[RMDB]
RNA sequence: GGGAACGACUCGAGUAGAGUCGAAAAUGUAAACAUCCUUGACUGGAAGCUGUAAGGUGUUGAGAGGAGCUUUCAGUCGGAUGUUUACAAAAAGCCCAUUUUACAGAGUUCGCUCUGUAAAAUGGGCGUGCUGCGUUAAGUUCGCUUAACGCAGCACAAAAGAAACAACAACAACAAC
Reactivity to 2A3 in 0.01 (KOAc 150mM, MgCl2 10mM, bicine 150mM(pH8.5), 24C), signal-to-noise 2, nucleotides 027 to 126: u060g010u000a020a000a000c000a000u000c010c000u130u270g000a000c000u030g000g020a000a010g000c000u050g050u300a060a090g170g080u190g080u260u280g110a180g010a070g090g090a000g010c030u000u020u000c020a000g000u000c000g010g000a000u000g010u020u010u020a000c000a000a000a000a000a000g000c030c000c000a000u020u000u000u000a010c000a000g020a010g020u060u100c140g040c080u010c000u000g000u010a000a000a000a000u010g010g010g000c010
Record summary:
The record gives the reactivity of an RNA of 177 nucleotides to 2A3. Source: RMDB library RFMREP, as collected in RNAgym.